[RMDB]
RNA sequence: GGGAACGACUCGAGUAGAGUCGAAAAUUGCUGGUGGCUCCGUUUACGGACAGCGUCAGCGUCAGCAGGGACUCUUACAUAGGCUACCUUUUGACCUUGUACCGCGAGGCGCUCGGGAGGAAUAACCUAGACGAGGCCACCUUUAACGAGGUGACGGGUCACUUCCCUUAUUCGUAAGGGAAGUGACAAAAGAAACAACAACAACAAC
Reactivity to 2A3 in 0.01 (KOAc 150mM, MgCl2 10mM, bicine 150mM(pH8.5), 24C), signal-to-noise 1, nucleotides 027 to 156: u110u090g030c000u020g000g010u020g040g020c010u000c050c000g020u000u100u030a050c090g040g070a010c070a060g000c010g060u020c000a010g000c000g050u000c120a140g100c060a010g000g000g080a060c070u010c100u250u090a120c130a150u130a040g000g040c040u040a150c000c010u070u040u050u120g020a080c000c000u000u000g030u040a050c000c010g020c000g030a120g020g000c020g030c040u020c050g070g000g050a010g070g090a140a060u130a070a030c000c000u000a000g000a000c030g010a020g030g000c050c030a000c000c000u000u070u000a080a030c000g000a010g080g050u020g050a010c040g070g030